[RMDB]
RNA sequence: GGGAACGACUCGAGUAGAGUCGAAAACUCUCACAGUGUGGGGUAUUACAUACUGAUUGCAGGUAAUGAUACCUGGUGGGAAGAUCUGUGAGACCUUGUUCUGAUGCUUCCUCUCAAGAUUCACAGGAGGGAACACUAGGUUCGCCUAGUGUUCCCUAAAAGAAACAACAACAACAAC
Reactivity to 2A3 in 0.01 (KOAc 150mM, MgCl2 10mM, bicine 150mM(pH8.5), 24C), signal-to-noise 1, nucleotides 027 to 126: c020u020c000u030c000a020c000a000g030u020g080u050g120g000g030g020u040a030u000u050a090c060a020u090a030c030u050g110a160u300u210g180c050a020g030g020u190a110a000u100g080a010u040a060c020c000u040g010g070u150g030g020g030a120a040g070a110u000c000u030g050u060g020a000g030a030c000c000u000u170g050u140u010c030u030g140a160u050g080c000u080u000c020c000u010c010u020c050a050a060g020a210u220u120c010a040c030a070g040g050
Reactivity to DMS in 0.01 (KOAc 150mM, MgCl2 10mM, bicine 150mM(pH8.5), 24C), signal-to-noise 1, nucleotides 027 to 126: c120u000c010u020c040a070c050a070g000u000g040u010g000g000g020g000u000a030u000u000a090c130a070u010a240c040u010g010a230u000u020g030c110a050g000g000u000a070a090u000g000a140u000a010c020c010u000g000g060u000g000g020g010a090a070g010a020u000c020u000g010u000g000a060g000a060c060c080u020u010g010u000u000c060u000g000a100u020g020c090u000u000c030c010u000c080u020c080a020a100g010a100u030u000c070a100c070a000g000g020
About this RNA:
Structure probing data (2A3 and DMS) for a 177-nucleotide construct. For 2A3, 604 sequencing reads were counted. Source: RMDB library OK2TST, as collected in RNAgym. For 2A3 the reverse transcriptase was SuperScript II with manganese.